RNA sequence: GGGAACGACUCGAGUAGAGUCGAAAAAAUCGCGUUUCAUGGACAGACGGUGUCUUGCCCUGAUGUCCGGUUUUUUCCGUCAGCGCAGUGCCCGGCUGUUCUGUUGCGGCGCGUCUCCCCACAUAGCCUUGUUUUCUUACUUCGGUAAGAAAACAAGAAAAGAAACAACAACAACAAC
Reactivity to 2A3 in 0.01 (KOAc 150mM, MgCl2 10mM, bicine 150mM(pH8.5), 24C), signal-to-noise 1, nucleotides 027 to 126: a000a020u060c000g000c010g010u010u030u010c040a070u070g000g010a000c000a000g010a010c000g000g040u080g030u080c000u010u020g010c020c010c000u000g000a010u040g120u130c110c010g020g010u100u080u010u000u080u040c040c030g050u050c010a020g000c020g010c040a000g020u020g080c000c000c010g030g020c020u000g000u100u030c010u050g170u060u030g020c020g010g030c000g000c000g000u010c030u020c050c010c030c010a050c000a050u100a010g040c000
Reactivity to DMS in 0.01 (KOAc 150mM, MgCl2 10mM, bicine 150mM(pH8.5), 24C), signal-to-noise 2, nucleotides 027 to 126: a060a020u000c020g020c020g020u000u020u010c000a060u000g010g000a020c010a000g000a040c010g010g020u000g020u000c030u010u000g010c000c060c000u010g000a050u010g000u020c260c100g000g000u000u000u000u000u010u000c070c000g000u010c010a010g020c300g010c000a010g000u010g000c080c000c020g010g010c020u000g010u000u000c000u010g000u000u000g010c070g000g010c020g000c000g000u010c060u000c030c000c020c120a130c270a100u000a100g020c200
This 177-nucleotide RNA was probed chemically with 2A3 and DMS. Values are in units of 0.01, from 0 to 300, in steps of 10. 2A3 adducts were read by reverse transcription with SuperScript II with manganese. High DMS reactivity at an A or C suggests that its Watson-Crick edge is free. For 2A3, 1,767 sequencing reads were counted.